[RMDB]
RNA sequence: GGGAACGACUCGAGUAGAGUCGAAAAUUGCGCCUCCGAUUCGCCGUCGGCAUUUCCCCAGCAGCCAUGACCUACCAGGCUGCGGUGCGGCUCGCCGCACAGGUCAUCCCUCAUCGGGGGCGUCCUGGAUAGGGCUAUACUUUCGAGUAUAGCCCAAACUAAUCCUCUACUUCGGUAGAGGAUUAGUAAAAGAAACAACAACAACAAC
Reactivity to 2A3 in 0.01 (KOAc 150mM, MgCl2 10mM, bicine 150mM(pH8.5), 24C), signal-to-noise 1, nucleotides 027 to 156: u100u020g010c010g020c020c010u000c000c000g020a030u020u100c090g070c050c030g060u040c010g000g050c010a090u070u110u090c030c070c000c020a060g030c000a010g010c000c020a140u120g060a090c020c030u100a200c110c060a020g030g000c000u000g000c020g000g000u040g000c020g000g030c000u020c200g100c010c000g060c000a020c010a040g000g010u070c020a230u150c050c000c020u080c020a020u020c010g000g000g000g000g000c000g050u030c010c000u070g060g000a120u110a090g000g000g000c000u000a000u000a010c010u070u130u060c250g040a010g010u010a000u000a020g100c020c000c000a000a000
Reactivity to DMS in 0.01 (KOAc 150mM, MgCl2 10mM, bicine 150mM(pH8.5), 24C), signal-to-noise 2, nucleotides 027 to 156: u000u000g010c010g020c030c010u000c010c000g010a030u000u010c060g010c030c030g000u000c040g000g010c080a180u000u000u000c010c030c020c050a090g020c020a020g040c010c010a170u010g010a120c050c050u010a140c130c070a180g000g010c010u010g020c020g030g040u000g000c020g010g010c050u010c210g050c020c020g050c070a060c020a030g030g020u010c010a160u000c010c010c010u000c130a090u000c060g010g040g000g010g040c030g000u000c030c020u010g020g000a230u000a090g010g020g010c000u000a010u000a010c010u000u010u000c210g030a060g050u000a000u010a020g000c010c000c000a000a010
The data come from the RNA Mapping Database (RMDB), library M2RFPK. An RNA of 207 nucleotides, treated with 2A3 and DMS and read out base by base. Reactivities are given for positions 27 through 156. The reactions ran in a buffer of 150 mM KOAc, 10 mM MgCl2 and 150 mM bicine (pH 8.5), at 24 C. For 2A3, 554 sequencing reads were counted.